[RMDB]
RNA sequence: GGGAACGACUCGAGUAGAGUCGAAAACAAAGAGAGUUCGCUCUCUUUGAAAUACUAAGACCGAAGCUUAGAUGGCCCACACUUCCCUUGGAAACCGGCAAAAAACAGAAGGGUUCGCCCUUCUGAACCAGUAUGGUAUCUUCGGAUACCAUACUGGAAAAGAAACAACAACAACAAC
Reactivity to DMS in 0.01 (KOAc 150mM, MgCl2 10mM, bicine 150mM(pH8.5), 24C), signal-to-noise 1, nucleotides 027 to 126: c010a020a000a020g000a020g000a020g010u000u020c300g000c000u000c000u000c000u010u000u000g000a040a120a100u000a120c040u020a020a050g000a160c010c030g000a030a030g000c040u000u020a020g000a130u010g000g020c020c000c050a050c090a080c080u000u000c010c010c000u000u010g020g000a020a100a090c100c070g000g000c190a000a030a040a060a060a120c010a010g000a020a010g000g000g000u010u010c180g000c010c000c000u000u000c000u010g000a080a080